Structure probing data (2A3 and DMS) for a 207-nucleotide construct. DMS adducts were read by reverse transcription with MarathonRT. As a SHAPE reagent, 2A3 marks flexible, mostly unpaired nucleotides at the ribose 2'-OH. The 2A3 profile rests on 717 reads. The reactions ran in a buffer of 150 mM KOAc, 10 mM MgCl2 and 150 mM bicine (pH 8.5), at 24 C.
RNA sequence: GGGAACGACUCGAGUAGAGUCGAAAAAGGCCACAAUGCCCUGCUUCCAUCAUUUAAGCCUCUGGCCCUAGCACUUCCUACGAAAAGGAUCUGAGAGAAUUAAAUUGCCCCCAAACUUACCAUGUAACAUUACUGAAGCUGCUAUUCUUAAAGCUAAACCAUUUUAUGAGUUCGCUCAUAAAAUGGUAAAAGAAACAACAACAACAAC
Reactivity to 2A3 in 0.01 (KOAc 150mM, MgCl2 10mM, bicine 150mM(pH8.5), 24C), signal-to-noise 2, nucleotides 027 to 156: a000g060g000c080c010a080c060a030a050u050g020c000c010c020u010g000c040u080u020c150c030a100u110c030a080u150u160u120a110a000g010c010c020u060c050u050g050g000c020c000c000u010a040g000c000a050c050u100u100c010c000u070a050c030g040a090a070a020a060g040g010a060u000c020u060g000a060g000a010g020a090a100u110u050a110a040a170u250u250g060c080c030c000c000c010a020a020a030c040u050u040a080c030c020a080u080g040u050a050a040c000a130u050u040a020c030u100g020a010a020g000c040u030g000c010u020a080u120u000c000u020u140a070a050a020g000c040u050a180a030
Reactivity to DMS in 0.01 (KOAc 150mM, MgCl2 10mM, bicine 150mM(pH8.5), 24C), signal-to-noise 1, nucleotides 027 to 156: a120g000g000c020c050a040c140a060a140u000g050c020c020c030u010g030c030u010u010c080c050a130u030c070a090u000u020u010a090a160g010c010c010u000c060u000g030g000c020c000c010u010a110g030c050a090c010u010u000c000c030u010a190c070g000a080a090a140a120g000g000a040u000c040u000g000a110g030a120g010a070a090u010u000a000a080a120u010u010g000c060c000c010c020c010a030a060a050c050u000u000a060c050c020a090u000g000u010a080a080c050a090u000u000a080c070u000g000a070a200g010c000u000g030c040u000a250u020u030c010u010u000a090a060a100g000c130u000a090a100